[RMDB]
This 170-nucleotide RNA was probed chemically with 2A3 and DMS. The DMS profile rests on 62,543 reads.
RNA sequence: GGGAACGACUCGAGUAGAGUCGAAAAAGACUUCAACUGAACAAGUUGACGUUUCUCAUGAGACUUCUGACGACGAGUGGGCUGCUGCAGUUGAUGAAGCGUUCCCUCUCGAUGAAGCAGAAGAUGUAUACGUAUGGGUUCGCCCAUACGAAAAGAAACAACAACAACAAC
Reactivity to 2A3 in 0.01 (KOAc 150mM, MgCl2 10mM, bicine 150mM(pH8.5), 24C), signal-to-noise 9, nucleotides 027 to 129: a010g020a000c000u000u000c000a000a000c000u030g060a080a050c100a260a010g000u000u000g000a000c010g000u000u060u000c030u000c020a110u210g100a040g050a080c000u000u000c000u020g080a120c030g010a010c010g000a000g000u030g000g010g000c050u100g000c000u030g020c040a110g040u240u170g160a220u090g050a100a010g010c010g030u170u180c000c020c000u000c000u000c000g120a150u130g050a090a030g000c010a000g000a000a000g030a020u120g120u110a100u030a080
Reactivity to DMS in 0.01 (KOAc 150mM, MgCl2 10mM, bicine 150mM(pH8.5), 24C), signal-to-noise 9, nucleotides 027 to 129: a040g020a050c030u000u000c010a010a010c000u000g010a120a090c240a150a010g000u030u030g000a000c080g020u000u000u000c000u000c000a110u060g020a130g010a110c000u000u010c010u000g030a090c050g030a020c050g000a030g000u030g020g010g020c300u050g000c010u010g030c030a030g000u060u040g040a190u010g000a070a010g000c000g010u000u020c020c030c000u000c000u000c000g000a080u000g000a120a110g000c010a000g000a040a020g000a070u020g000u040a090u020a100
Annotation:
Conditions: 150 mM KOAc, 10 mM MgCl2 and 150 mM bicine (pH 8.5), 24 C. For DMS the reverse transcriptase was MarathonRT.